An RNA of 177 nucleotides, treated with DMS and 2A3 and read out base by base.
For 2A3, 32,786 sequencing reads were counted.
The reactions ran in a buffer of 150 mM KOAc, 10 mM MgCl2 and 150 mM bicine (pH 8.5), at 24 C.
Values cover nucleotides 27 to 126.
[RMDB]
RNA sequence: GGGAACGACUCGAGUAGAGUCGAAAAUGUCUGGUGCCAUCAGGAAGUAGCCCCGAGCCAGAGCACAAAGGGCCUUUGUCCUGCCUGCCCCGCCCAGCGAGACCUCGGGCCCAGCCAGGGCUGGGGGCAUCACCUAAUGAUUCGUCAUUAGGUGAUGAAAAGAAACAACAACAACAAC
Reactivity to DMS in 0.01 (KOAc 150mM, MgCl2 10mM, bicine 150mM(pH8.5), 24C), signal-to-noise 9, nucleotides 027 to 126: u010g010u000c020u000g010g020u000g010c030c040a100u000c050a060g010g010a080a100g020u000a130g010c020c000c010c020g000a110g010c020c020a100g000a180g010c040a080c140a050a120a120g000g010g010c010c080u000u010u000g010u000c020c020u000g000c110c050u000g000c060c020c020c050g010c030c040c030a100g000c050g000a080g000a070c040c120u000c120g010g010g010c000c000c010a090g010c060c110a170g000g010g010c010u000g000g010g010g000g010
Reactivity to 2A3 in 0.01 (KOAc 150mM, MgCl2 10mM, bicine 150mM(pH8.5), 24C), signal-to-noise 7, nucleotides 027 to 126: u100g020u020c030u040g040g020u070g050c020c020a080u050c040a070g050g050a090a040g050u120a040g020c020c000c000c000g020a010g000c010c020a060g030a100g070c040a020c080a100a130a060g020g000g000c010c000u070u100u120g040u030c000c000u020g050c010c010u030g010c000c010c000c010g020c000c010c000a010g020c010g020a040g020a040c010c050u050c070g020g010g000c000c010c000a010g030c020c030a060g000g060g000c000u040g050g000g010g010g000